[RMDB]
RNA sequence: GGGAACGACUCGAGUAGAGUCGAAAAGAUAUGGACGAUUGACAUGCUCAGGUACGGAUCGGAAACGAUUUUCGUAUAUUGGAGCAACAGCAAUCGUCCUAAGUCAAAAGGAUCGUUCGCGAUCCAACUGAUUAUCAGGCUUCGGCCUGAUAAUCAGAAAAGAAACAACAACAACAAC
Reactivity to 2A3 in 0.01 (KOAc 150mM, MgCl2 10mM, bicine 150mM(pH8.5), 24C), signal-to-noise 2, nucleotides 027 to 126: g030a020u050a060u160g020g010a010c020g000a000u030u000g040a140c090a110u080g000c010u030c030a030g070g000u000a010c000g010g000a000u010c020g000g030a020a130a040c020g020a010u050u000u160u260c020g000u030a020u010a150u020u230g300g050a030g040c000a020a030c040a040g080c000a020a030u010c020g000u000c000c000u000a080a000g010u010c060a010a000a140a110g020g020a000u010c010g020u080u040c300g000c030g140a030u000c000c000a000a000
Reactivity to DMS in 0.01 (KOAc 150mM, MgCl2 10mM, bicine 150mM(pH8.5), 24C), signal-to-noise 1, nucleotides 027 to 126: g000a050u000a300u000g000g020a000c020g000a000u000u010g010a170c110a180u030g000c000u000c000a040g000g030u000a000c010g010g020a000u000c000g010g000a130a040a200c000g010a010u000u010u020u000c000g010u000a000u000a090u020u010g030g000a000g020c000a010a010c300a150g030c000a000a000u000c000g000u000c000c000u020a000a080g020u000c000a060a090a140a120g000g000a010u000c000g000u000u000c120g010c020g000a000u000c000c040a050a100

Structure probing data (2A3 and DMS) for a 177-nucleotide construct. The data come from the RNA Mapping Database (RMDB), library TTRDEL. For DMS, 931 sequencing reads were counted. DMS adducts were read by reverse transcription with MarathonRT. For 2A3, 1,908 sequencing reads were counted. The RNA was probed in 150 mM KOAc, 10 mM MgCl2 and 150 mM bicine (pH 8.5) at 24 C.